[RMDB]
RNA sequence: GGGAACGACUCGAGUAGAGUCGAAAACCAUACAUUCGUGUAUGGAAAAAGAUAUGGACGCUACCGACUUCGAUAAGCUCAGGACAUCGGAAACGAUGUCUGAGCUUUUGACGAAGGGGUAGCGUCCUAAGUCAAAAAAGAGGUAUUCGUACCUCAAUAAAACCUACAUGUUCGCAUGUAGGUUUUAAAAAGAAACAACAACAACAAC
Reactivity to DMS in 0.01 (KOAc 150mM, MgCl2 10mM, bicine 150mM(pH8.5), 24C), signal-to-noise 3, nucleotides 027 to 156: c010c000a030u000a020c000a090u000u000c260g080u000g040u010a010u000g000g010a050a090a060a130a120g010a120u010a300u000g000g010a040c010g010c000u010a020c010c000g020a160c010u000u000c010g030a150u000a020a010g040c000u010c010a060g080g000a010c000a000u000c000g010g010a160a150a260c000g020a020u010g030u000c000u000g000a010g000c000u000u000u000u000g010a200c060g010a050a020g020g020g010g010u000a010g010c010g010u000c000c000u000a000a070g010u000c040a010a100a060a110a150a120g010a020g010g010u000a080u010u010c170g030u000a030c020c000u000c010a030a090